[RMDB]
RNA sequence: GGGAACGACUCGAGUAGAGUCGAAAAAAAGAACACAGGAAAAGCACCCAUAAACUGUGCACUACACAGCACUUUGCAACCUCUCAGCCUUUCCAUGCCCUCUCACAGCAGCCCAGUGAGGCAGGCGUCAUUAUUGACCCCAUUUUGUGGGUGAGAAUAAUGCGGUAUUAUUCGUAAUACCGCAUUAAAAAGAAACAACAACAACAAC
Reactivity to DMS in 0.01 (KOAc 150mM, MgCl2 10mM, bicine 150mM(pH8.5), 24C), signal-to-noise 3, nucleotides 027 to 156: a080a040a070g010a110a040c050a060c060a060g010g000a060a110a080a090g020c030a080c020c020c000a060u000a090a050a070c040u000g000u000g010c050a210c120u000a050c040a080c030a060g010c010a110c090u010u000u000g000c060a060a070c030c020u000c030u000c040a100g010c010c030u000u000u010c020c010a130u000g000c020c010c030u010c040u010c010a040c010a070g010c020a110g000c010c020c020a150g020u010g000a060g020g000c070a070g020g000c030g040u000c040a060u010u000a130u000u010g010a110c030c000c000c000a210u000u000u000u000g040u010g010g020g020u000g000a100g000a120a190
Reactivity to 2A3 in 0.01 (KOAc 150mM, MgCl2 10mM, bicine 150mM(pH8.5), 24C), signal-to-noise 3, nucleotides 027 to 156: a000a000a030g100a090a040c090a010c030a060g080g040a050a020a020a080g040c040a050c010c020c040a040u110a040a110a020c040u030g000u010g000c040a050c080u160a050c110a020c010a040g020c010a030c080u040u130u170g020c040a060a100c010c010u010c020u010c030a020g010c000c020u010u090u080c060c020a050u130g030c000c030c000u030c000u000c000a020c010a050g030c000a010g030c010c010c020a020g040u040g070a070g010g000c020a010g020g020c020g030u010c020a020u030u230a050u060u130g030a030c030c010c020c010a030u100u160u090u160g100u060g010g030g000u020g010a030g020a030a050